[RMDB]
RNA sequence: GGGAACGACUCGAGUAGAGUCGAAAAAAAAUAGCGAAGUGCUUAAGGCUAUCUUAGUGAAGUAUGGUUGCUGUGAUGUUACCUACUUUGAAAAUAAACUCUGGUUUGAUUUUGUUGAAAAUCCCAGUACGUUGGGACUUCGGUCCCAACAAAAGAAACAACAACAACAAC
Reactivity to 2A3 in 0.01 (KOAc 150mM, MgCl2 10mM, bicine 150mM(pH8.5), 24C), signal-to-noise 2, nucleotides 027 to 129: a000a000a000a000u030a000g000c040g000a100a000g130u140g120c140u230u120a010a000g040g010c010u000a000u070c070u020u210a220g020u120g100a030a040g020u000a000u280g020g000u030u000g000c000u010g030u020g110a180u150g100u020u070a000c000c000u030a080c020u030u070u060g160a220a200a000a000u110a080a050a040c020u000c020u010g040g040u050u190u000g000a010u000u000u070u120g100u050u050g010a110a080a000a000u000c000c000c000a010g000u020a130c260
Reactivity to DMS in 0.01 (KOAc 150mM, MgCl2 10mM, bicine 150mM(pH8.5), 24C), signal-to-noise 2, nucleotides 027 to 129: a000a000a000a000u020a020g030c010g010a000a000g040u030g070c090u000u020a140a120g000g000c090u000a100u020c090u010u000a120g000u060g050a000a000g040u020a020u140g000g040u000u000g020c030u010g040u080g010a030u000g100u040u000a070c040c000u010a050c040u010u000u010g010a060a090a070a120u060a040a050a060c100u030c070u020g010g000u030u020u050g020a040u000u000u000u000g010u000u000g060a070a060a040a040u030c000c020c010a060g070u000a050c300
An RNA of 170 nucleotides, treated with 2A3 and DMS and read out base by base. For DMS the reverse transcriptase was MarathonRT. Values cover nucleotides 27 to 129. The DMS profile rests on 7,235 reads. The 2A3 profile rests on 1,622 reads. The reactions ran in a buffer of 150 mM KOAc, 10 mM MgCl2 and 150 mM bicine (pH 8.5), at 24 C.